[RMDB]
RNA sequence: GGGAACGACUCGAGUAGAGUCGAAAAGCAACCAUCGGCAAAGGAAGCGUCGCUGGAAUCCUAUUGGUGGUCAAUGUGACGCUGAUCGGGGUCGUUUCGGCGAUCUCCUUCGUCGCCUUCGCGGAUCGCUGGAUUUAUUAUUCGUAAUAAAUCCAGCAAAAGAAACAACAACAACAAC
Reactivity to DMS in 0.01 (KOAc 150mM, MgCl2 10mM, bicine 150mM(pH8.5), 24C), signal-to-noise 8, nucleotides 027 to 126: g010c120a120a190c030c030a110u020c010g010g000c010a050a050a040g010g010a070a040g010c160g010u000c010g020c000u000g000g000a070a040u010c010c010u000a090u010u000g010g020u000g010g020u000c030a150a120u000g020u010g020a020c010g010c000u000g000a010u000c230g010g000g000g010u000c150g010u000u000u000c050g010g010c010g000a020u000c030u000c010c010u000u000c050g010u000c050g010c140c050u000u000c110g020c090g010g000a130u000c160
Reactivity to 2A3 in 0.01 (KOAc 150mM, MgCl2 10mM, bicine 150mM(pH8.5), 24C), signal-to-noise 9, nucleotides 027 to 126: g050c030a040a120c010c010a040u070c020g040g000c020a030a020a010g020g010a050a010g040c040g070u000c000g000c010u020g010g060a080a070u300c000c010u030a060u070u130g080g010u180g070g040u040c030a090a190u300g120u200g090a000c000g000c010u020g000a010u040c060g000g000g010g040u080c060g010u020u020u020c030g030g000c000g000a010u010c010u010c010c000u030u020c010g070u040c020g030c020c020u070u080c110g010c090g060g040a070u120c110

Record summary: An RNA of 177 nucleotides, treated with DMS and 2A3 and read out base by base. The reactions ran in a buffer of 150 mM KOAc, 10 mM MgCl2 and 150 mM bicine (pH 8.5), at 24 C.